[RMDB]
RNA sequence: GGGAACGACUCGAGUAGAGUCGAAAAGCCGCGGGCGCAUUCCGGGUCCCGGGGCCGGGGCGCGGACGGCUGCCGACGGGAGCCCGGCACCCGCGCCCAGACACGUCACGGCCGAGCUGCCACGCGACGAUAGGACGUGAUUCGUCACGUCCUAUCGAAAAGAAACAACAACAACAAC
Reactivity to 2A3 in 0.01 (KOAc 150mM, MgCl2 10mM, bicine 150mM(pH8.5), 24C), signal-to-noise 1, nucleotides 027 to 126: g070c050c020g000c020g010g000g000c040g010c050a030u190u000c060c000g050g010g010u050c050c030c000g000g010g020g070c020c010g000g030g000g000c030g030c000g000g070a020c000g020g010c060u090g110c080c050g080a090c050g030g030g020a060g120c060c050c000g010g000c020a010c000c030c050g000c000g000c020c000c000a000g020a010c050a010c080g020u040c010a010c040g000g040c050c000g000a000g020c030u080g040c050c000a100c040g020c010g050a100
Reactivity to DMS in 0.01 (KOAc 150mM, MgCl2 10mM, bicine 150mM(pH8.5), 24C), signal-to-noise 2, nucleotides 027 to 126: g010c200c010g020c050g000g010g020c040g030c030a160u000u010c110c000g010g010g000u010c050c030c000g020g010g000g010c030c020g010g000g010g000c010g020c010g010g030a100c140g000g000c020u000g010c030c040g000a140c070g000g010g000a100g030c020c030c020g000g000c090a060c070c030c040g020c050g000c000c000c000a080g010a070c090a090c070g000u000c060a110c060g000g030c010c030g000a090g010c050u000g000c040c010a100c070g030c040g010a150